Chemical mapping of a 177-nucleotide RNA with 2A3. Source: RMDB library OK1LIB, as collected in RNAgym.
RNA sequence: GGGAACGACUCGAGUAGAGUCGAAAAUAAACAAAUCACGCACUAAACCGGUGGUCCGUGCCCAGACCACCGUCGCUGCAUUCAGCUUCUUCGGAACCUCUUCGGAGGUUAUAAUUGCGAACACAAAGCCACAGUAGCACUUCGGUGCUACUGUGGCAAAAGAAACAACAACAACAAC
Reactivity to 2A3 in 0.01 (KOAc 150mM, MgCl2 10mM, bicine 150mM(pH8.5), 24C), signal-to-noise 1, nucleotides 027 to 126: u160a000a120a000c080a000a070a000u290c000a000c050g020c000a010c080u290a110a120a000c110c000g000g000u000g000g000u000c000c000g000u110g300c020c020c020a000g000a000c000c000a000c000c000g000u000c000g000c000u000g010c000a120u080u180c000a000g110c000u000u000c000u000u160c180g070g040a000a000c000c000u000c080u160u180c180g110g000a000g060g000u000u120a000u000a020a060u050u000g000c000g080a130a020c080a000c150a120a020a020

Annotation
The 2A3 profile rests on 364 reads. For 2A3 the reverse transcriptase was SuperScript II with manganese.